[RMDB]
RNA sequence: GGGAACGACUCGAGUAGAGUCGAAAAUGUCACACAGUAGCGAGGGAUGCAAUUAAUUGCAUCUACACCAUGCUCAAGGCUUGGAUUUCGACUAGUGUCGAGUCGUUCCCACUCGCUACGCCCACAAGACUAGGUGAAGAUUCGUCUUCACCUAGUCAAAAGAAACAACAACAACAAC
Reactivity to DMS in 0.01 (KOAc 150mM, MgCl2 10mM, bicine 150mM(pH8.5), 24C), signal-to-noise 4, nucleotides 027 to 126: u010g020u000c180a130c170a150c170a100g040u000a020g010c010g000a040g000g000g010a000u010g010c000a000a050u010u000a130a050u000u000g010c000a000u000c000u000a060c120a150c020c010a020u000g000c000u000c190a140a130g010g000c030u010u000g010g000a300u000u000u000c010g000a010c000u000a030g020u000g010u000c000g010a000g020u000c000g010u000u000c000c000c010a000c020u000c010g010c010u000a010c010g020c050c010c020a080c160a080a080
This 177-nucleotide RNA was probed chemically with DMS.
Values cover nucleotides 27 to 126.
Conditions: 150 mM KOAc, 10 mM MgCl2 and 150 mM bicine (pH 8.5), 24 C.
For DMS, 4,000 sequencing reads were counted.